Background: Structure probing data (2A3 and DMS) for a 177-nucleotide construct. Reactivities are rounded to 0.1 and cut off at 0 and 3. Conditions: 150 mM KOAc, 10 mM MgCl2 and 150 mM bicine (pH 8.5), 24 C. The DMS profile rests on 1,884 reads. For 2A3, 3,083 sequencing reads were counted.
RNA sequence: GGGAACGACUCGAGUAGAGUCGAAAAGAUAUGGAGAGGUGGCUAUCAAACUGGCGCUCGGAAACGAGCGCAGUUUGCAACGGCCACUCCCCACCUCCUAAGUCAAACUUCAGCUUCGGCUGAAGAAGGGAGAAUAUAUCUUCGGAUAUAUUCUCCCAAAAGAAACAACAACAACAAC
Reactivity to 2A3 in 0.01 (KOAc 150mM, MgCl2 10mM, bicine 150mM(pH8.5), 24C), signal-to-noise 2, nucleotides 027 to 126: g050a070u240a080u180g020g000a040g020a020g000g110u030g000g000c010u070a040u250c020a010a000a020c020u080g300g050c000g000c000u010c000g020g000a040a060a030c020g000a000g000c000g000c000a020g010u000u000u000g000c050a130a150c160g000g020c010c000a010c000u030c010c010c010c010a020c000c000u000c000c020u080a140a050g100u100c120a140a090a100c020u030u020c000a000g000c000u040u160c210g210g000c000u000g010a010a010g010a010a040
Reactivity to DMS in 0.01 (KOAc 150mM, MgCl2 10mM, bicine 150mM(pH8.5), 24C), signal-to-noise 2, nucleotides 027 to 126: g010a090u010a140u000g000g010a010g010a060g010g020u000g000g000c000u020a060u010c000a010a020a020c000u010g030g040c000g070c010u010c010g030g000a070a100a220c000g000a030g030c000g040c010a000g000u000u000u000g000c300a070a060c190g010g010c000c000a030c000u010c020c010c010c010a180c120c060u000c010c000u010a080a130g010u020c110a130a060a160c000u000u000c000a000g010c010u000u010c190g020g000c010u000g000a010a000g000a050a090